RNA sequence: GGGAACGACUCGAGUAGAGUCGAAAACAUUACGACGGAAAGAUGAAGACUACAAACCCCUGCAAGAAGAGCAUUGAGAUAGAUAUUACAGGUACUACGAAGCCGAAGCCCGGGGACCUCGUUUUGAAGAUACGGUACAAUUCGUUGUACCGUAUCUAAAAGAAACAACAACAACAAC
Reactivity to DMS in 0.01 (KOAc 150mM, MgCl2 10mM, bicine 150mM(pH8.5), 24C), signal-to-noise 3, nucleotides 027 to 126: c070a080u020u010a090c110g030a100c090g000g010a090a060a080g010a080u010g000a080a110g000a050c060u000a080c110a070a110a200c090c040c010c030u000g000c090a070a070g000a090a070g000a070g010c050a060u000u010g000a110g000a100u000a030g010a080u010a060u000u000a060c070a090g020g000u000a060c060u010a080c050g000a050a110g020c040c030g000a070a080g030c030c030c020g020g000g010g000a090c070c050u010c090g010u000u010u010u010g000a150
Reactivity to 2A3 in 0.01 (KOAc 150mM, MgCl2 10mM, bicine 150mM(pH8.5), 24C), signal-to-noise 2, nucleotides 027 to 126: c030a010u130u230a040c030g000a010c050g030g080a110a050a060g040a060u090g070a040a060g030a070c020u060a080c220a050a120a220c020c000c000c040u000g040c020a050a060g090a060a000g040a070g030c030a030u080u150g030a050g010a090u040a000g080a030u040a050u110u110a060c070a040g060g040u030a030c020u020a020c040g050a140a000g030c010c040g040a030a010g000c020c000c000g010g040g040g040a010c000c000u040c010g020u040u000u070u040g020a030